[RMDB]
RNA sequence: GGGAACGACUCGAGUAGAGUCGAAAAGAUAUGGAGUCACGUGUAGGUUGCCUAUUGUCAGAAGUUGUGGUCGGAAACGACCACUCUUCUUGGAUUUAUAGGAACUCCUACACGUGACUCCUAAGUCGUCAUGGAGAAGGUUCGCCUUCUCCAUGACAAAAGAAACAACAACAACAAC
Reactivity to DMS in 0.01 (KOAc 150mM, MgCl2 10mM, bicine 150mM(pH8.5), 24C), signal-to-noise 1, nucleotides 027 to 126: g000a090u000a300u010g000g010a040g010u000c000a000c010g000u000g020u000a010g010g000u030u010g030c000c000u000a000u000u000g010u000c010a040g000a020a000g010u000u000g020u000g020g020u000c010g010g000a080a100a260c000g000a030c000c010a000c000u000c000u000u000c000u000u000g030g000a020u000u000u010a000u000a000g010g000a130a160c180u000c010c010u000a000c000a000c000g000u000g000a000c000u000c000c000u010a030a070g010u000c080